[RMDB]
RNA sequence: GGGAACGACUCGAGUAGAGUCGAAAAAAGAUAUGGAUUUGUGAGAAGCUUGGAUUUAUGGGUUGAGUAUGUCGGAAACGACAUACAAGAUGAGCCCAUUGUCAGCUUCUCCAAAUCCUAAGUCAAACUGAUCAUAACGGUUCGCCGUUAUGAUCAGAAAAGAAACAACAACAACAAC
Reactivity to 2A3 in 0.01 (KOAc 150mM, MgCl2 10mM, bicine 150mM(pH8.5), 24C), signal-to-noise 1, nucleotides 027 to 126: a000a000g130a050u080a060u100g000g000a040u040u030u010g170u190g000a000g020a010a000g000c190u300u300g270g000a020u260u200u000a000u060g000g000g000u040u020g000a050g090u010a000u010g000u000c000g040g000a060a060a040c010g010a000c010a000u000a000c000a000a000g190a050u270g090a020g040c010c000c020a000u010u000g000u000c000a010g000c000u000u000c000u010c000c000a000a000a000u000c000c000u010a050a010g060u000c020a010a050a090
Reactivity to DMS in 0.01 (KOAc 150mM, MgCl2 10mM, bicine 150mM(pH8.5), 24C), signal-to-noise 1, nucleotides 027 to 126: a060a110g010a020u000a300u000g000g000a010u000u000u000g040u010g020a000g010a040a000g010c000u020u010g000g040a010u000u000u000a000u000g010g020g000u000u010g000a300g000u010a000u000g000u000c000g000g000a120a090a270c000g010a010c000a000u000a000c000a010a120g060a300u010g010a110g010c020c000c000a020u000u000g000u000c010a020g000c000u000u000c000u030c000c030a010a010a000u000c000c010u000a040a090g010u010c020a070a120a300
Structure probing data (2A3 and DMS) for a 177-nucleotide construct.
The 2A3 profile rests on 1,512 reads.
For 2A3 the reverse transcriptase was SuperScript II with manganese.